[RMDB]
Source: RMDB library OK3TST, as collected in RNAgym.
Structure probing data (2A3 and DMS) for a 207-nucleotide construct.
Values cover nucleotides 27 to 156.
RNA sequence: GGGAACGACUCGAGUAGAGUCGAAAAUGACAUGCAUCAGGUUCAAAUGAUUUGCAGAAAAAAGAGUGAAACUAAGGUCAAAGCUGAUCAGAAUUUGAGAAGACAAGAUAACUUUUUCUUCUUCUUCUUGCAUUUGCAUACAUAUACACACUUACAAACCUAAAUCGGUAUUCGUACCGAUUUAGGUAAAAGAAACAACAACAACAAC
Reactivity to 2A3 in 0.01 (KOAc 150mM, MgCl2 10mM, bicine 150mM(pH8.5), 24C), signal-to-noise 7, nucleotides 027 to 156: u100g020a020c040a040u040g030c020a040u030c040a050g090g000u120u060c080a090a100a100u120g040a050u020u040u140g020c050a020g100a040a070a010a010a000a000g050a020g020u070g020a040a040a030c050u050a080a050g020g000u030c010a060a010a020g020c050u030g010a040u020c030a030g120a180a110u110u190u150g010a020g010a010a000g010a020c040a080a000g010a070u100a140a220c100u130u110u060u020u000c010u030u000c000u010u010c000u020u010c010u010u030g020c020a060u030u030u090g020c000a020u060a110c020a040u130a020u110a070c070a020c020a020c130u160u180a050c130a090a120
Reactivity to DMS in 0.01 (KOAc 150mM, MgCl2 10mM, bicine 150mM(pH8.5), 24C), signal-to-noise 3, nucleotides 027 to 156: u010g000a080c070a110u010g040c040a120u000c030a070g020g030u000u020c070a040a160a130u000g010a050u000u000u000g020c040a060g020a000a000a080a090a030a130g010a060g010u000g000a110a050a090c120u000a060a100g050g010u010c020a070a160a120g030c030u010g000a160u000c020a300g000a120a140u000u000u000g010a050g000a080a060g010a060c160a010a120g000a070u000a050a150c130u000u000u000u000u010c010u000u000c040u000u000c030u000u000c030u000u010g000c070a080u000u000u010g000c090a080u000a070c090a070u000a090u000a060c060a030c050a050c030u000u000a040c020a060a110
The RNA was probed in 150 mM KOAc, 10 mM MgCl2 and 150 mM bicine (pH 8.5) at 24 C. The 2A3 profile rests on 5,510 reads.